Chemical mapping of a 207-nucleotide RNA with 2A3. The 2A3 profile rests on 998 reads. The reactions ran in a buffer of 150 mM KOAc, 10 mM MgCl2 and 150 mM bicine (pH 8.5), at 24 C.

[RMDB]
RNA sequence: GGGAACGACUCGAGUAGAGUCGAAAAUUUACGUUCGCGUAAAACAGGGGAUAUGGAGGUCGUAACGUUCAUCGAUCGAGGUAAAUGGUCGGAAACGACCAUUUAAAUAUGGGAGAACGCCCGACCUCCUAAGUCAGAGCUAUACAUUCGUGUAUAAGCAAGUAGCACUAUUCGUAGUGCUACUUGCAAAAGAAACAACAACAACAAC
Reactivity to 2A3 in 0.01 (KOAc 150mM, MgCl2 10mM, bicine 150mM(pH8.5), 24C), signal-to-noise 2, nucleotides 027 to 156: u010u000u000a030c010g000u010u060c180g000c000g160u020a000a020a030a040c040a020g080g000g000g000a030u000a040u180g010g010a000g000g000u000c000g050u050a090a020c040g000u000u030c120a240u080c240g220a040u070c060g100a070g090g010u000a010a010a010u000g000g000u020c020g010g070a090a000a020c010g010a010c000c020a000u000u000u000a000a000a000u200a040u010g020g030g010a100g010a000a000c010g020c010c010c000g020a000c000c040u010c000c020u000a000a000g000u000c010a010g010a030g090c010u040a040u030a050c010a070u120u190c090g050u100g050u130a070u030a150a000